[RMDB]
RNA sequence: GGGAACGACUCGAGUAGAGUCGAAAACAUAUGGAUCUAUUGAAACUUAUUAUUAUCUGAAUCUUUAGUACAAAAUGACCGAUGUUUCAGGUAGUAUCGAAGAUGCAGAAAAGCUUGGACCAUCAAACCACCUAAUUAGUUUCGACUAAUUAGGUGGAAAAGAAACAACAACAACAAC
Reactivity to DMS in 0.01 (KOAc 150mM, MgCl2 10mM, bicine 150mM(pH8.5), 24C), signal-to-noise 3, nucleotides 027 to 126: c080a100u020a060u010g000g010a110u000c020u010a060u030u000g020a110a090a130c030u000u000a100u010u020a120u010u000a140u000c000u000g000a050a030u000c000u000u000u000a090g020u000a030c030a070a070a120a120u000g000a030c060c080g010a080u030g000u000u010u000c030a060g000g010u010a110g000u000a010u000c100g000a010a020g000a030u000g000c030a020g000a060a080a060a100g030c070u000u010g010g000a060c000c010a030u010c190a050a060a200
Reactivity to 2A3 in 0.01 (KOAc 150mM, MgCl2 10mM, bicine 150mM(pH8.5), 24C), signal-to-noise 4, nucleotides 027 to 126: c040a020u170a050u110g020g060a200u000c010u010a070u140u080g040a140a130a080c030u060u130a080u180u050a120u090u080a100u300c000u010g020a020a020u020c010u040u050u030a040g010u020a050c020a020a300a100a140u140g020a030c020c050g100a110u160g120u070u140u030c000a000g000g020u050a020g000u010a020u060c020g000a020a010g000a020u030g020c010a000g030a040a070a010a010g020c030u040u060g000g000a010c010c000a020u040c040a020a040a090